RNA sequence: GGGAACGACUCGAGUAGAGUCGAAAAAAUUUACGUUUGGGCAUCAUCUCUAAGGAGUCUGAACUGUGAAAGUGGAUGAGGUCACCGAGGAAACUAGUCUAGAUUGAAGAGAGAGAAGGGAAUGAGCAUGGUUGGGAGGGAGAACUCCUCCAGAGCAGGUGAAAGGAACUUUCGAGUUCCUUUCACCAAAAGAAACAACAACAACAAC
Reactivity to 2A3 in 0.01 (KOAc 150mM, MgCl2 10mM, bicine 150mM(pH8.5), 24C), signal-to-noise 1, nucleotides 027 to 156: a000a050u150u110u020a040c050g080u000u050u020g010g000g010c050a160u050c020a050u020c010u030c070u180a160a060g070g020a040g010u020c050u050g020a100a040c010u090g040u020g120a200a140a110g010u040g040g020a080u040g010a070g020g030u010c010a010c070c020g000a000g030g040a000a050a080c050u050a050g030u020c010u060a080g030a170u030u130g040a080a000g010a000g000a020g010a000g040a040a020g000g030g020a000a080u100g000a010g030c030a020u060g020g000u090u010g020g010g000a030g000g000g010a090g000a010a010c030u010c000c000u000c030c030a030g050a000g060c070a030
Source: RMDB library OK3TST, as collected in RNAgym. Structure probing data (2A3) for a 207-nucleotide construct. For 2A3 the reverse transcriptase was SuperScript II with manganese.